RNA sequence: GGGAACGACUCGAGUAGAGUCGAAAAACUAUUUGUUCUAUAGCAAACAAACCCGAAACACAGUAUAUAUUUGUUAUAUAUGCUUUGUGGGACACAGCUGUUAGGACUUGAGCCAUCAGGGUCCAAAAAUUAUGAUCAGCUUCGGCUGAUCAUAAUUAAAAGAAACAACAACAACAAC
Reactivity to DMS in 0.01 (KOAc 150mM, MgCl2 10mM, bicine 150mM(pH8.5), 24C), signal-to-noise 2, nucleotides 027 to 126: a090c110u020a120u020u010u000g010u000u010c030u010a130u010a020g000c020a080a070a110c120a060a100a110c020c000c010g040a120a120a080c020a000c010a030g010u000a010u000a000u000a010u000u040u060g010u050u020a070u010a020u000a010u000g010c000u000u020u000g020u000g000g010g000a090c080a100c290a090g000c030u000g020u000u000a050g000g000a030c050u020u010g010a080g000c040c050a060u010c030a060g000g000g000u000c040c010a020a070a090
Reactivity to 2A3 in 0.01 (KOAc 150mM, MgCl2 10mM, bicine 150mM(pH8.5), 24C), signal-to-noise 3, nucleotides 027 to 126: a000c080u080a080u100u080u070g020u000u030c030u050a060u190a030g040c030a050a010a110c010a010a070a030c020c010c000g090a050a110a000c010a000c000a020g010u000a010u010a000u000a030u020u120u120g070u290u030a010u050a000u020a000u030g010c000u040u000u010g000u050g020g000g030a030c070a000c010a140g020c010u040g020u100u100a030g000g000a000c000u010u120g050a010g070c000c010a050u040c020a050g050g020g050u070c050c010a050a070a000
This 177-nucleotide RNA was probed chemically with DMS and 2A3. Conditions: 150 mM KOAc, 10 mM MgCl2 and 150 mM bicine (pH 8.5), 24 C. For DMS, 4,561 sequencing reads were counted. Source: RMDB library OK1LIB, as collected in RNAgym. For DMS the reverse transcriptase was MarathonRT. For 2A3 the reverse transcriptase was SuperScript II with manganese.